[RMDB]
RNA sequence: GGGAACGACUCGAGUAGAGUCGAAAAAACUAAUUAUAAAAGCACCGAAGAGGGCUUUCGGCGAUAUUGACAGGCAGCUGCAUUUGUGCCCGGAAAGCGCGAAGUGUAAUCAAUGAGUAAAGCAAAUUAUACAGCUUGAAUUCGUUCAAGCUGUAUAAAAAGAAACAACAACAACAAC
Reactivity to 2A3 in 0.01 (KOAc 150mM, MgCl2 10mM, bicine 150mM(pH8.5), 24C), signal-to-noise 3, nucleotides 027 to 126: a000a010c190u230a190a140u300u150a170u130a130a050a000a000g080c010a040c150c000g030a070a020g010a060g100g090g020c000u080u040u000c010g080g020c040g040a010u030a050u190u220g050a080c010a010g000g090c020a020g000c000u010g010c010a000u030u070u120g030u030g000c010c010c000g090g010a090a030a000g050c090g000c030g050a030a030g020u040g000u070a000a040u080c160a010a090u070g050a050g080u090a010a050a060g000c050a150a000a000u000
Reactivity to DMS in 0.01 (KOAc 150mM, MgCl2 10mM, bicine 150mM(pH8.5), 24C), signal-to-noise 2, nucleotides 027 to 126: a100a050c030u000a060a100u020u010a160u040a090a070a120a120g000c010a000c070c060g010a080a110g020a110g000g000g040c000u000u000u000c010g000g010c040g000a070u000a040u020u000g000a100c070a040g010g020c140a050g000c000u000g000c040a050u020u000u000g050u030g020c040c000c050g010g000a020a030a070g040c100g000c020g040a080a070g000u010g000u020a110a050u030c090a030a090u010g000a060g020u010a030a070a110g000c090a040a060a130u020
The data come from the RNA Mapping Database (RMDB), libraries RFM100 and RFMREP. The record gives the reactivity of an RNA of 177 nucleotides to 2A3 and DMS. As a SHAPE reagent, 2A3 marks flexible, mostly unpaired nucleotides at the ribose 2'-OH. For DMS the reverse transcriptase was MarathonRT.